An RNA of 177 nucleotides, treated with 2A3 and DMS and read out base by base. Source: RMDB library OK2TRN, as collected in RNAgym.

RNA sequence: GGGAACGACUCGAGUAGAGUCGAAAAUUCAAUUCAAGAACUAAGAAUAAAGCAGACUUGUGGUUCAUGUCGCAUCAAGGAGUGAUGCGAGAGGGAAAAUUCAUACCAAAGCUUGAGAAGGAAAGAACAAGAUCUAGAACUUCGGUUCUAGAUCUUGAAAAGAAACAACAACAACAAC
Reactivity to 2A3 in 0.01 (KOAc 150mM, MgCl2 10mM, bicine 150mM(pH8.5), 24C), signal-to-noise 1, nucleotides 027 to 126: u040u000c030a030a030u050u000c050a070a050g070a110a110c050u100a140a020g030a140a060u140a220a070a000g040c040a060g050a120c040u090u050g000u080g080g050u030u030c040a040u150g040u080c000g000c030a010u040c020a050a130g190g010a210g300u110g000a000u010g000c030g000a000g000a000g000g020g070a050a070a000a100u100u050c020a030u040a050c000c000a020a120a000g010c070u090u050g040a030g080a020a080g080g030a130a040a020g040a050a000
Reactivity to DMS in 0.01 (KOAc 150mM, MgCl2 10mM, bicine 150mM(pH8.5), 24C), signal-to-noise 2, nucleotides 027 to 126: u010u010c050a040a120u000u000c040a030a100g000a120a100c080u020a080a070g020a120a090u000a090a130a080g000c050a050g010a090c100u000u000g020u010g020g010u000u000c040a090u000g010u000c000g010c000a000u000c030a060a160g030g020a130g000u000g000a020u000g000c000g000a020g000a090g000g000g000a050a030a090a060u000u010c050a050u000a090c100c030a020a060a150g020c020u000u000g000a080g000a170a060g000g000a040a030a100g030a050a170